[RMDB]
Source: RMDB library OK2TST, as collected in RNAgym. This 177-nucleotide RNA was probed chemically with DMS and 2A3. DMS adducts were read by reverse transcription with MarathonRT.

RNA sequence: GGGAACGACUCGAGUAGAGUCGAAAACGACGAGCAUGUGCGGCGUCACCGGGAUCAAACCGACGUGGGGCCGGGUCAGCCGUCACGGCGUCGUCGAACUUGCGGCAAGCUACGACCACGUCGGGCCCAUUAGUCAGCCCUUCGGGGCUGACUAAUGAAAAGAAACAACAACAACAAC
Reactivity to DMS in 0.01 (KOAc 150mM, MgCl2 10mM, bicine 150mM(pH8.5), 24C), signal-to-noise 2, nucleotides 027 to 126: c040g000a000c020g010a150g000c030a080u000g030u000g020c020g000g020c000g000u010c270a200c010c020g000g020g000a140u000c140a080a120a160c010c020g010a060c100g000u000g000g040g050g000c030c020g020g020g010u010c170a240g010c010c000g010u000c060a040c030g010g010c010g000u000c120g040u000c000g000a040a090c090u020u000g000c010g000g000c030a060a090g000c020u000a050c070g000a250c120c040a020c020g000u000c020g000g010g000c050c020
Reactivity to 2A3 in 0.01 (KOAc 150mM, MgCl2 10mM, bicine 150mM(pH8.5), 24C), signal-to-noise 1, nucleotides 027 to 126: c010g010a000c000g000a020g000c010a120u150g010u020g030c050g020g060c010g040u010c050a080c130c040g010g020g050a180u160c070a090a100a140c030c050g050a090c050g070u140g010g030g060g120c040c000g010g000g010u070c050a000g020c000c010g040u130c060a010c000g000g080c030g150u140c030g000u010c000g030a120a020c020u040u110g000c030g000g000c060a110a070g000c040u050a020c020g030a080c020c000a020c040g030u020c010g020g000g000c030c000
The reactions ran in a buffer of 150 mM KOAc, 10 mM MgCl2 and 150 mM bicine (pH 8.5), at 24 C.
2A3 adducts were read by reverse transcription with SuperScript II with manganese.